[RMDB]
RNA sequence: GGGAACGACUCGAGUAGAGUCGAAAAUAGCCACGAACCCUAUAUCGCCGUGCGUCGCGCUUUGAAGAUCUAUCCUGAACGGGCCGGUGACGCGACACCGGAGCGGCUUGCCGCCACGCUGGCGGGACGCAUGGUCAGUGUUCGCACUGACCAUGCGAAAAGAAACAACAACAACAAC
Reactivity to 2A3 in 0.01 (KOAc 150mM, MgCl2 10mM, bicine 150mM(pH8.5), 24C), signal-to-noise 1, nucleotides 027 to 126: u020a000g000c050c010a050c010g080a020a060c050c010c010u020a080u020a040u270c050g030c060c030g070u020g000c000g000u040c030g020c020g060c020u170u040u170g170a160a080g020a050u080c070u180a060u070c060c050u050g030a100a040c070g000g050g000c000c010g000g020u020g030a000c050g000c020g100a060c020a000c020c000g010g010a020g110c050g020g000c070u000u060g030c000c000g000c000c000a060c060g220c020u070g000g010c020g040g010g000a020
Reactivity to DMS in 0.01 (KOAc 150mM, MgCl2 10mM, bicine 150mM(pH8.5), 24C), signal-to-noise 1, nucleotides 027 to 126: u000a100g040c060c020a050c080g000a080a190c060c000c020u020a110u000a120u000c050g040c010c060g020u000g000c030g000u000c080g020c050g010c070u070u000u000g000a090a060g030a080u000c050u010a090u000c040c050u000g000a120a140c110g030g010g000c000c010g000g000u000g000a030c110g010c070g000a040c000a030c000c000g000g000a030g040c040g000g000c100u000u000g020c050c020g020c000c040a120c150g020c060u000g010g030c000g020g000g000a080

About this RNA: The data come from the RNA Mapping Database (RMDB), library OK2TST. An RNA of 177 nucleotides, treated with 2A3 and DMS and read out base by base. 2A3 adducts were read by reverse transcription with SuperScript II with manganese. The RNA was probed in 150 mM KOAc, 10 mM MgCl2 and 150 mM bicine (pH 8.5) at 24 C. For DMS, 967 sequencing reads were counted. Values cover nucleotides 27 to 126. The 2A3 profile rests on 1,031 reads.